[RMDB]
RNA sequence: GGGAACGACUCGAGUAGAGUCGAAAAGAUAUGGAUUUACACGAGUCUCUUAUCAGGACAUGCUACUAUGUCGGAAACGACAUUUUAGCAACAGCCUGAAUAAGAGACUCGUGUAAAUCCUAAGUCAUCAACACUAUCCGUUCGCGGAUAGUGUUGAAAAAGAAACAACAACAACAAC
Reactivity to DMS in 0.01 (KOAc 150mM, MgCl2 10mM, bicine 150mM(pH8.5), 24C), signal-to-noise 1, nucleotides 027 to 126: g000a070u000a300u000g000g010a030u000u000u000a000c000a000c010g010a030g000u000c000u010c000u000u000a000u000c000a020g000g010a000c060a240u000g000c010u000a020c030u030a000u000g000u000c010g010g000a100a090a210c020g010a030c000a010u000u000u000u010a000g010c010a020a080c300a200g000c000c000u000g000a070a060u000a000a000g000a000g020a000c000u000c000g000u000g000u000a000a000a010u000c000c000u020a010a070g000u030c030a270